[RMDB]
RNA sequence: GGGAACGACUCGAGUAGAGUCGAAAAUUGAAGGAUGUAUUGGUUUAAAUCCUGAUUCAGGAAAGAGAAUGUUGAAAGUAAUGCAGCAAUAAAGAAGGGAGAUACCAUUCUCUUCAUAAGAAGUCAAAGCAUUUCCCUGGAUAAGGUAGCCUCAGCACGUAUAGGCCAUGUUCGCAUGGCCUAUACGAAAAGAAACAACAACAACAAC
Reactivity to DMS in 0.01 (KOAc 150mM, MgCl2 10mM, bicine 150mM(pH8.5), 24C), signal-to-noise 2, nucleotides 027 to 156: u000u010g010a110a120g030g010a060u010g000u000a110u010u000g020g030u000u000u010a020a140a110u000c020c020u000g020a180u020u020c040a180g000g000a060a060a020g040a070g040a070a110u000g020u000u010g000a070a070a110g020u000a080a090u000g000c050a100g000c020a110a040u000a050a120a130g010a090a050g010g030g010a060g000a130u020a050c130c030a170u000u000c010u000c010u000u000c030a090u000a080a130g000a040a070g000u010c020a060a070a090g030c010a080u000u000u010c010c000c000u010g080g000a120u010a020a060g030g020u000a090g060c010c010u000c050a060g000c030a190
Reactivity to 2A3 in 0.01 (KOAc 150mM, MgCl2 10mM, bicine 150mM(pH8.5), 24C), signal-to-noise 3, nucleotides 027 to 156: u100u060g030a040a010g060g040a030u060g020u140a100u130u150g030g000u050u030u100a000a050a040u060c020c030u000g020a020u020u010c030a020g070g060a160a050a020g050a020g060a070a030u070g010u010u110g090a080a050a030g060u120a040a050u070g040c050a080g000c050a050a100u140a180a080a080g030a000a000g020g020g010a010g010a040u070a110c040c000a030u130u000c000u000c010u000u000c000a000u010a060a030g090a050a040g040u130c080a080a050a060g030c000a000u040u030u000c000c000c030u010g000g000a030u020a030a010g000g020u040a010g010c000c020u070c030a040g050c020a010
Source: RMDB library OK3TST, as collected in RNAgym.
This 207-nucleotide RNA was probed chemically with DMS and 2A3.
For DMS the reverse transcriptase was MarathonRT.
The reactions ran in a buffer of 150 mM KOAc, 10 mM MgCl2 and 150 mM bicine (pH 8.5), at 24 C.
The DMS profile rests on 3,022 reads.